The record gives the reactivity of an RNA of 177 nucleotides to DMS and 2A3.
RNA sequence: GGGAACGACUCGAGUAGAGUCGAAAACUGAAUCCGAUCGAGUUGGAUCUCCGGAUUUGGAGCGUGACAGUGAAGUGAAGGGCGAUGCAGGGAACUGUCCCUGCGUGUUUCGUCCAUGCACUGCAUGCAAACAUCCGCGUUUCGACGCGGAUGUUUGAAAAGAAACAACAACAACAAC
Reactivity to DMS in 0.01 (KOAc 150mM, MgCl2 10mM, bicine 150mM(pH8.5), 24C), signal-to-noise 2, nucleotides 027 to 126: c040u010g000a020a020u000c000c010g010a120u010c120g000a060g000u010u050g020g000a120u010c000u000c050c020g010g010a020u000u000u010g040g020a150g030c040g040u010g000a120c010a030g040u000g020a130a120g040u010g010a160a100g010g010g020c010g010a020u000g000c010a030g010g000g010a080a270c300u030g000u000c000c010c000u000g020c010g000u010g000u000u010u000c070g010u000c000c010a120u010g000c000a010c010u000g000c020a030u000g000
Reactivity to 2A3 in 0.01 (KOAc 150mM, MgCl2 10mM, bicine 150mM(pH8.5), 24C), signal-to-noise 1, nucleotides 027 to 126: c010u050g030a000a050u000c000c010g020a090u120c120g000a050g060u110u110g300g130a280u030c020u020c000c000g000g020a010u010u040u080g060g030a140g110c010g000u030g030a200c010a020g040u020g050a180a020g050u130g190a180a160g020g010g010c020g050a000u090g040c000a020g000g030g050a080a120c150u140g260u210c000c000c000u000g000c020g010u060g030u000u090u010c100g000u000c000c000a000u040g000c010a010c000u030g000c010a010u030g000
Reactivities are given for positions 27 through 126.
For DMS the reverse transcriptase was MarathonRT.